The record gives the reactivity of an RNA of 177 nucleotides to DMS and 2A3.
The RNA was probed in 150 mM KOAc, 10 mM MgCl2 and 150 mM bicine (pH 8.5) at 24 C.
For 2A3 the reverse transcriptase was SuperScript II with manganese.
RNA sequence: GGGAACGACUCGAGUAGAGUCGAAAAGAUAUGGAACGUCUACCCACCGUGGGCCAACGCUUUGAUCAAGUGCUAGUCGGAAACGACUAGCACUUGGGAGCGUUGCCCACGAGGACGUUCCUAAGUCCAAUCCUUAGCUCUUCGGAGCUAAGGAUUGAAAAGAAACAACAACAACAAC
Reactivity to DMS in 0.01 (KOAc 150mM, MgCl2 10mM, bicine 150mM(pH8.5), 24C), signal-to-noise 2, nucleotides 027 to 126: g000a110u010a150u010g000g000a000a020c000g000u010c010u000a150c020c000c050a300c100c020g000u000g030g000g000c230c050a000a010c010g010c000u000u010u000g000a150u000c000a010a000g020u010g010c020u010a000g010u000c000g020g030a150a150a160c010g010a020c000u000a010g000c000a000c000u010u000g000g000g010a030g010c000g030u000u000g000c010c010c000a010c030g010a030g010g030a020c020g000u020u000c000c020u000a010a110g000u000c100
Reactivity to 2A3 in 0.01 (KOAc 150mM, MgCl2 10mM, bicine 150mM(pH8.5), 24C), signal-to-noise 2, nucleotides 027 to 126: g090a100u300a180u300g000g030a000a010c000g000u060c030u090a300c020c000c020a030c020c040g040u020g040g000g040c300c100a000a020c000g030c070u300u180u180g230a210u300c030a030a000g020u000g030c000u000a000g040u030c030g010g110a250a090a070c020g000a000c000u000a010g010c010a000c010u000u000g000g010g010a000g000c000g000u000u000g000c020c030c000a000c060g000a000g010g000a000c010g010u010u000c000c000u000a030a020g130u100c040